[RMDB]
An RNA of 177 nucleotides, treated with 2A3 and DMS and read out base by base. The DMS profile rests on 12,573 reads. It was measured as part of the RMDB library TTRDEL.

RNA sequence: GGGAACGACUCGAGUAGAGUCGAAAAGAUAUGGAGGACUGUACGUGCUUUGAUCUCGGAAACGAGGGAGCACUACACAUGUCCUCCUAAGUCAAAAGUUAGCAAGGUCUUCGGACCUUGCUAACAACUAUAUUGUACGGUUCGCCGUACAAUAUAGAAAAGAAACAACAACAACAAC
Reactivity to 2A3 in 0.01 (KOAc 150mM, MgCl2 10mM, bicine 150mM(pH8.5), 24C), signal-to-noise 6, nucleotides 027 to 126: g020a020u070a040u160g000g010a010g000g000a000c010u040g010u050a030c090g020u010g010c020u210u240u150g130a170u090c000u000c020g030g030a090a070a070c020g000a010g000g010g010a000g000c000a000c000u030a000c010a000c000a060u180g000u000c000c000u000c000c000u000a010a010g010u010c010a010a010a020a180g000u000u000a000g000c000a010a010g010g000u000c010u130u220c300g030g000a000c000c000u000u010g000c000u000a000a000c000a000a000
Reactivity to DMS in 0.01 (KOAc 150mM, MgCl2 10mM, bicine 150mM(pH8.5), 24C), signal-to-noise 8, nucleotides 027 to 126: g010a040u000a300u010g000g010a020g000g000a020c010u000g010u000a140c250g010u000g010c000u010u000u010g010a070u010c000u000c010g000g010a100a090a200c010g000a020g000g000g000a010g010c010a010c000u000a100c180a040c150a040u010g010u000c000c000u000c000c000u000a010a070g010u000c050a080a040a110a120g000u000u000a000g000c000a010a010g000g010u000c000u000u010c210g020g000a010c000c000u000u000g000c000u000a000a000c000a050a160